RNA sequence: GGGAACGACUCGAGUAGAGUCGAAAACUAACCACGUUCGCGUGGUUAGAAAAGCGGCCAGCUCCAGGCCGCCAAACAAUAUGCAGCACAAGACGAAAGUCAAAAGUAUCUGCUUCGGCAGAUACAAGAUCUAUUCAUUCUUCGGAAUGAAUAGAUCAAAAGAAACAACAACAACAAC
Reactivity to 2A3 in 0.01 (KOAc 150mM, MgCl2 10mM, bicine 150mM(pH8.5), 24C), signal-to-noise 4, nucleotides 027 to 126: c000u000a010a000c000c000a010c000g010u030u030c140g000c000g130u010g010g000u000u000a000g000a000a060a010a010g000c000g000g000c010c010a060g000c020u000c010c010a000g000g000c000c020g000c000c020a030a060a010c030a010a020u040a020u080g010c020a010g000c020a020c040a150a090g010a010c020g040a130a040a010g010u020c000a030a080a010a050g000u000a000u000c000u000g010c000u030u040c150g100g000c000a000g000a010u000a000c000a000a010
Reactivity to DMS in 0.01 (KOAc 150mM, MgCl2 10mM, bicine 150mM(pH8.5), 24C), signal-to-noise 3, nucleotides 027 to 126: c000u000a010a010c010c000a000c000g010u000u020c160g060c010g030u000g000g010u000u000a000g000a050a070a110a180g020c000g010g010c000c000a060g010c030u000c210c010a050g000g020c010c000g010c000c120a020a080a050c110a050a030u000a060u000g020c270a010g010c020a140c300a080a070g010a010c020g000a090a050a130g010u000c000a070a080a100a120g010u000a000u000c000u000g000c000u000u010c150g030g000c000a000g010a000u000a000c000a070a080
An RNA of 177 nucleotides, treated with 2A3 and DMS and read out base by base. The reactions ran in a buffer of 150 mM KOAc, 10 mM MgCl2 and 150 mM bicine (pH 8.5), at 24 C. High DMS reactivity at an A or C suggests that its Watson-Crick edge is free. Values are in units of 0.01, from 0 to 300, in steps of 10.